Background
Source: RMDB library RSTRND, as collected in RNAgym. The record gives the reactivity of an RNA of 207 nucleotides to 2A3.

RNA sequence: GGGAACGACUCGAGUAGAGUCGAAAAUUUGUUACACCAUCUAGCGGUACGCCGCUAGCGGUUUUUAACAAGGUGCCAGUACCGCGUUAACGACUGUCACUUAGAACUGGAUCGCAGUGAAGCCUGCCUGGGGUGGAUCAGCUAAACUUUUACAGGACAAACCCUAACAGUUCGCUGUUAGGGUUUGAAAAGAAACAACAACAACAAC
Reactivity to 2A3 in 0.01 (KOAc 150mM, MgCl2 10mM, bicine 150mM(pH8.5), 24C), signal-to-noise 2, nucleotides 027 to 156: u060u100u160g080u090u100a030c020a080c050c070a030u040c000u000a000g000c000g000g000u020a090c280g030c050c020g010c000u000a000g000c010g000g000u020u000u000u000u060a020a000c010a010a010g000g000u020g020c000c030a010g010u000a030c020c030g010c020g000u010u000a030a030c060g050a010c010u040g010u110c010a050c160u140u260a000g020a030a000c010u010g000g040a030u030c020g000c020a050g000u000g020a030a000g010c010c030u000g000c000c000u000g020g000g000g000u000g010g010a000u030c030a010g000c030u080a040a030a110c050u060u150u240u300a070c010a000g000g030a000